The record gives the reactivity of an RNA of 207 nucleotides to 2A3. The reactions ran in a buffer of 150 mM KOAc, 10 mM MgCl2 and 150 mM bicine (pH 8.5), at 24 C.
RNA sequence: GGGAACGACUCGAGUAGAGUCGAAAACUCAAUGUAGGGAAUAACAUUGAAUUGAUACAAAUACCUUUUUCGGUGUAGGGAAAAGCACCGAAUUGAUACAAAUACCUUUCUCAAUGUAGGGAAUAACAAAACAGGCAUCGCUUCGGCGAUGCCUGAACGUUGAUGAGGACUUCGGUCCUCAUCAACGAAAAGAAACAACAACAACAAC
Reactivity to 2A3 in 0.01 (KOAc 150mM, MgCl2 10mM, bicine 150mM(pH8.5), 24C), signal-to-noise 1, nucleotides 027 to 156: c070u010c000a020a040u200g040u040a190g100g130g000a000a200u140a040a020c000a000u000u020g020a130a150u130u130g020a020u110a300c000a000a160a000u080a070c020c010u080u060u000u000u040c000g000g030u070g010u060a140g060g040g100a000a130a000a040g000c000a000c000c000g000a000a000u000u020g040a020u020a010c010a030a210a000u130a060c010c040u020u040u040c020u070c070a000a130u140g010u110a120g010g010g070a000a050u090a040a000c110a000a050a000a050c000a000g000g000c000a000u000c000g000c080u020u130c240g010g000c010g000a000u000g000c000c000u000g000a000a000